[RMDB]
RNA sequence: GGGAACGACUCGAGUAGAGUCGAAAAGCAAAAAACGAAAACUCUUUCGCUAUCGCUGCCUAAAAACCAGUGAUGCGUAGCUUAAUCUUGGUUGCUGGCGUCUGAGGUUAGGCCAUAAAAGGCCAGAUCGUACUGCUUCUUACAUCUGGAAAAGCAGGCUUUAUCAUCACUUCGGUGAUGAUAAAGCAAAAGAAACAACAACAACAAC
Reactivity to DMS in 0.01 (KOAc 150mM, MgCl2 10mM, bicine 150mM(pH8.5), 24C), signal-to-noise 1, nucleotides 027 to 156: g010c040a020a020a030a080a010a030c040g000a010a090a050a080c080u000c030u000u010u000c010g020c000u020a060u010c040g060c000u000g000c010c020u010a040a110a040a200a090c300c010a020g040u020g010a040u000g020c020g040u000a050g050c030u000u000a060a020u000c050u010u000g010g010u010u000g010c060u000g010g010c040g000u000c010u010g020a090g000g000u000u010a080g030g000c000c010a090u000a030a120a140a190g050g000c010c050a090g000a050u000c030g000u010a150c060u000g000c030u000u000c020u000u010a060c050a060u000c110u020g000g000a070a060a020a060g020c000a020g010
Reactivity to 2A3 in 0.01 (KOAc 150mM, MgCl2 10mM, bicine 150mM(pH8.5), 24C), signal-to-noise 3, nucleotides 027 to 156: g020c030a030a030a050a060a020a060c150g090a140a120a090a060c050u050c060u060u100u060c020g010c070u130a000u060c010g000c010u010g000c000c020u050a030a040a010a010a010c010c000a000g010u000g020a010u020g010c020g040u020a010g010c020u050u020a060a040u060c020u020u040g040g020u060u100g030c010u020g040g020c020g030u000c010u010g000a010g000g000u020u030a020g000g010c030c030a050u130a120a120a020a020g030g010c010c000a000g010a040u080c050g020u040a040c020u010g020c000u050u020c010u090u110a080c040a080u080c080u110g050g000a080a060a030a000g030c010a010g000

Structure probing data (DMS and 2A3) for a 207-nucleotide construct. The DMS profile rests on 1,887 reads. For 2A3 the reverse transcriptase was SuperScript II with manganese. For DMS the reverse transcriptase was MarathonRT. The RNA was probed in 150 mM KOAc, 10 mM MgCl2 and 150 mM bicine (pH 8.5) at 24 C.